[RMDB]
RNA sequence: GGGAACGACUCGAGUAGAGUCGAAAAUGAAAGACUUUUGGGCUCUUUGGUUCAACAUCACGUCUCUGACGUGCUUGUUGACUGUCUGGCUGACUGCAGAGGCGGCUGUUGCCUGUGACGCCCCGUCGAAUGAACGACUUUUCGAAGUCGUUCAUUCAAAAGAAACAACAACAACAAC
Reactivity to DMS in 0.01 (KOAc 150mM, MgCl2 10mM, bicine 150mM(pH8.5), 24C), signal-to-noise 4, nucleotides 027 to 126: u000g010a140a110a080g010a070c060u000u000u010u010g020g000g010c020u000c060u000u000u010g020g010u010u000c000a000a020c000a000u000c000a020c000g010u000c000u010c220u020g000a010c000g030u000g000c160u000u000g010u000u000g010a040c090u000g010u000c060u000g010g000c060u010g000a080c060u000g000c100a070g020a100g000g010c040g020g000c050u000g010u000u010g010c050c010u000g010u000g000a070c120g010c040c010c010c130g010u010c110
Reactivity to 2A3 in 0.01 (KOAc 150mM, MgCl2 10mM, bicine 150mM(pH8.5), 24C), signal-to-noise 3, nucleotides 027 to 126: u100g000a010a050a010g080a050c030u080u100u130u130g040g020g000c020u020c000u140u130u170g040g000u150u080c000a020a000c000a010u010c010a000c060g020u000c130u010c110u300g020a020c000g020u010g030c050u010u000g010u050u010g010a020c030u000g070u000c040u030g020g040c010u020g020a120c050u080g000c020a010g020a090g170g030c030g010g010c040u050g070u150u070g000c000c010u040g030u070g010a010c030g020c010c000c000c000g070u060c050
Structure probing data (DMS and 2A3) for a 177-nucleotide construct. DMS adducts were read by reverse transcription with MarathonRT.